[RMDB]
RNA sequence: GGGAACGACUCGAGUAGAGUCGAAAAGCGGGCGGUGGAGGCCCUGCGGCUGGGCGCGGUGGACUUCCUGGAGAAGCCGCUCUCCUUCGAGAAGGUGAGGAUCGUAGCCGAGCGGACCGCGAGCGAGCUCGUUCUAGGAAUUCGUUCCUAGAACGAGAAAAGAAACAACAACAACAAC
Reactivity to 2A3 in 0.01 (KOAc 150mM, MgCl2 10mM, bicine 150mM(pH8.5), 24C), signal-to-noise 3, nucleotides 027 to 126: g050c030g070g020g000c020g030g050u090g030g030a030g010g030c030c010c010u010g030c020g030g020c040u090g030g030g070c000g000c000g030g000u090g050g020a100c000u030u020c010c030u070g070g030a210g010a070a020g000c020c000g010c000u000c000u000c010c000u020u060c060g090a130g050a120a030g050g060u120g040a050g010g050a050u070c040g010u040a030g010c000c010g010a020g000c020g020g030a030c020c010g010c010g030a040g050c030g010a030g020
Reactivity to DMS in 0.01 (KOAc 150mM, MgCl2 10mM, bicine 150mM(pH8.5), 24C), signal-to-noise 4, nucleotides 027 to 126: g010c080g020g010g000c030g020g030u000g010g000a100g000g010c020c020c010u000g040c030g000g020c060u000g010g010g010c040g000c020g010g030u010g010g010a100c050u000u000c010c020u010g020g010a150g000a090a110g000c000c010g010c030u000c010u000c130c020u000u000c100g000a110g000a090a060g000g000u000g010a060g000g000a090u000c050g010u000a070g020c040c030g000a050g020c020g000g000a060c030c010g000c030g000a160g000c050g000a160g010

Background:
Chemical mapping of a 177-nucleotide RNA with 2A3 and DMS. DMS adducts were read by reverse transcription with MarathonRT. Source: RMDB library OK2TST, as collected in RNAgym. For 2A3 the reverse transcriptase was SuperScript II with manganese. For DMS, 7,881 sequencing reads were counted.